RNA sequence: GGGAACGACUCGAGUAGAGUCGAAAAGAUAUGGAAGAGCGAUAAGUCCAGUAUCGGAAACGAUACGGACUUUUGACGCUCCUUCCUAAGUCAAAGACUGACCCACGGUUCGCCGUGGGUCAGUCAAUCUACUUAAUGGCUUCGGCCAUUAAGUAGAAAAAGAAACAACAACAACAAC
Reactivity to DMS in 0.01 (KOAc 150mM, MgCl2 10mM, bicine 150mM(pH8.5), 24C), signal-to-noise 2, nucleotides 027 to 126: g000a030u010a300u010g000g010a020a020g000a010g010c000g000a110u010a000a020g000u000c000c000a130g050u000a010u000c010g010g000a100a060a150c000g000a020u000a000c010g000g000a010c000u010u000u010u000g020a120c050g000c000u000c130c070u000u010c000c000u000a060a130g010u010c050a120a080a100g000a020c010u010g010a020c000c020c010a000c000g000g010u000u000c270g020c000c000g020u000g020g000g010u010c010a000g010u010c000a020a060
Notes
An RNA of 177 nucleotides, treated with DMS and read out base by base. DMS adducts were read by reverse transcription with MarathonRT.